[RMDB]
RNA sequence: GGGAACGACUCGAGUAGAGUCGAAAACCUCCAGAGUUCCUCUUCUUCUUCCUUGCUGAGGCUCUUUCCCCCUGCGGAGAGCUGCUUCUUCUUGUUCUCGAGGGCCUUCCUUCUUCGGUGAUCCUGCCAUAUAUUCGGUGUUCGCACCGAAUAUAUGAAAAGAAACAACAACAACAAC
Reactivity to DMS in 0.01 (KOAc 150mM, MgCl2 10mM, bicine 150mM(pH8.5), 24C), signal-to-noise 5, nucleotides 027 to 126: c040c010u000c080c060a090g000a170g010u000u000c020c010u000c040u000u000c020u000u000c040u000u000c040c030u010u000g020c080u010g010a110g010g020c030u000c020u000u000u000c010c010c020c150c120u000g010c130g010g010a060g000a060g010c070u000g010c060u000u000c020u000u000c030u000u000g010u000u010c020u000c040g010a130g010g000g010c040c040u000u010c020c010u000u000c030u000u010c050g020g020u000g000a100u000c020c010u000g010c160
Reactivity to 2A3 in 0.01 (KOAc 150mM, MgCl2 10mM, bicine 150mM(pH8.5), 24C), signal-to-noise 2, nucleotides 027 to 126: c000c000u030c020c030a040g020a020g130u070u050c000c000u020c010u070u000c000u040u010c000u040u050c050c010u060u060g020c030u040g050a030g030g030c010u020c000u060u060u060c010c010c010c000c030u040g060c060g020g020a020g010a020g020c030u030g010c000u030u000c000u060u020c010u050u060g020u070u010c010u010c040g020a040g030g050g010c000c000u040u050c010c000u020u030c000u050u040c030g020g010u020g010a050u030c000c000u020g020c000
This 177-nucleotide RNA was probed chemically with DMS and 2A3. 2A3 adducts were read by reverse transcription with SuperScript II with manganese. The DMS profile rests on 7,697 reads. Values cover nucleotides 27 to 126.